[RMDB]
RNA sequence: GGGAACGACUCGAGUAGAGUCGAAAAGUCUCACGAGUGCAGAGACAAAGGUAGUUGACUCCGGAGCUACCAGUACUCGAAUGAAUGCGAAAGAGUUCACGUAUUCCAACCGGAGAAGAACUCAAAAGCCUACGGAGUAGUUCGCUACUCCGUAGGCAAAAGAAACAACAACAACAAC
Reactivity to DMS in 0.01 (KOAc 150mM, MgCl2 10mM, bicine 150mM(pH8.5), 24C), signal-to-noise 1, nucleotides 027 to 126: g030u000c000u000c080a300c000g000a050g010u000g000c050a250g020a250g030a110c300a010a280a000g000g080u050a000g000u000u000g000a300c010u000c000c050g000g010a090g030c040u000a000c050c000a230g000u000a000c000u000c050g000a120a040u000g010a110a130u000g000c000g010a000a090a030g000a000g000u000u000c030a300c000g000u000a000u040u000c110c090a040a260c040c020g020g000a000g070a190a140g050a000a010c000u000c000a040a290a090a170
Reactivity to 2A3 in 0.01 (KOAc 150mM, MgCl2 10mM, bicine 150mM(pH8.5), 24C), signal-to-noise 3, nucleotides 027 to 126: g050u000c000u000c000a000c020g020a020g010u030g020c030a000g060a000g050a300c090a070a110a040g010g000u010a020g000u010u040g080a030c000u000c020c030g000g000a000g000c000u010a000c000c000a000g000u000a000c000u000c030g000a060a180u260g050a030a020u060g040c010g040a110a040a190g000a080g000u010u000c030a020c080g050u040a120u140u110c080c020a100a120c000c010g000g000a010g010a020a020g000a000a000c040u050c030a060a000a030a030